[RMDB]
Source information: This 177-nucleotide RNA was probed chemically with DMS and 2A3. For DMS, 8,041 sequencing reads were counted. High 2A3 reactivity points to a flexible backbone, as in loops and unpaired stretches. 2A3 adducts were read by reverse transcription with SuperScript II with manganese. The data come from the RNA Mapping Database (RMDB), library TTRDEL. For DMS the reverse transcriptase was MarathonRT. The RNA was probed in 150 mM KOAc, 10 mM MgCl2 and 150 mM bicine (pH 8.5) at 24 C. Values cover nucleotides 27 to 126.
RNA sequence: GGGAACGACUCGAGUAGAGUCGAAAAGAUAUGGAUCAUAGGCUAGCGAAUACAUCGGAAACGAUGUGAUCGCUUGGACCCUAUGAGUCCUAAGUCAAACAAGUCAAAACUUCGGUUUUGACUUGAAUCUAAAAUGGAUCUUCGGAUCCAUUUUAGAAAAAGAAACAACAACAACAAC
Reactivity to DMS in 0.01 (KOAc 150mM, MgCl2 10mM, bicine 150mM(pH8.5), 24C), signal-to-noise 6, nucleotides 027 to 126: g000a020u000a020u010g000g000a030u000c000a010u000a000g000g010c000u000a000g050c000g010a020a090u000a010c010a000u000c000g010g000a000a010a030c000g020a000u000g010u000g000a020u000c000g030c010u010u010g010g000a010c300c000c000u000a010u000g000a060g000u010c000c000u000a010a100g000u000c000a110a130a300c010a000a000g000u000c000a000a000a000a010c010u000u010c220g030g010u000u000u000u000g000a010c000u000u000g000a080a080
Reactivity to 2A3 in 0.01 (KOAc 150mM, MgCl2 10mM, bicine 150mM(pH8.5), 24C), signal-to-noise 2, nucleotides 027 to 126: g000a000u010a000u050g000g000a000u000c000a000u010a000g030g000c020u010a010g000c020g010a050a020u080a030c000a010u000c000g030g000a010a000a000c000g000a000u000g000u000g000a020u010c000g000c000u040u260g000g010a000c000c010c000u000a000u020g020a010g020u000c000c000u000a000a000g000u000c030a060a070a160c010a020a020g020u000c000a010a010a000a010c010u060u150c240g170g000u020u010u000u000g010a010c000u000u010g000a010a030